[RMDB]
RNA sequence: GGGAACGACUCGAGUAGAGUCGAAAAGCUGUUCUGUUCGCAGAACAGCAAAGGGAAGCAUCUCAAGCAUUUCAAGGUAGGGAGCACCUAGCAUUUCAAAAAAAACGGAUAAGUUCGCUUAUCCGAAUCAUCUAAGAAGGUUCGCCUUCUUAGAUGAAAAAGAAACAACAACAACAAC
Reactivity to DMS in 0.01 (KOAc 150mM, MgCl2 10mM, bicine 150mM(pH8.5), 24C), signal-to-noise 5, nucleotides 027 to 126: g020c000u010g000u000u000c000u000g010u010u020c170g030c000a000g010a000a020c000a010g010c010a010a010a070g000g000g010a110a080g010c030a080u000c040u000c030a070a160g010c050a090u010u010u010c160a110a090g000g010u000a090g010g010g010a080g010c050a070c040c010u010a070g010c110a080u000u000u000c050a000a000a000a100a050a050a100a160c010g010g000a020u010a010a010g010u000u010c220g010c000u000u000a000u000c000c010g010a030a040
Reactivity to 2A3 in 0.01 (KOAc 150mM, MgCl2 10mM, bicine 150mM(pH8.5), 24C), signal-to-noise 5, nucleotides 027 to 126: g000c000u000g000u000u000c000u000g050u040u060c240g040c070a000g000a000a000c000a000g010c000a010a020a040g010g010g000a120a020g020c030a260u030c030u000c060a060a080g010c030a100u070u160u260c100a140a070g090g000u030a010g050g030g020a010g020c010a020c010c010u020a010g030c040a090u050u210u270c180a090a020a010a010a000a010a020a030c010g000g000a000u000a000a010g030u040u110c210g040c120u000u010a000u000c000c000g010a000a030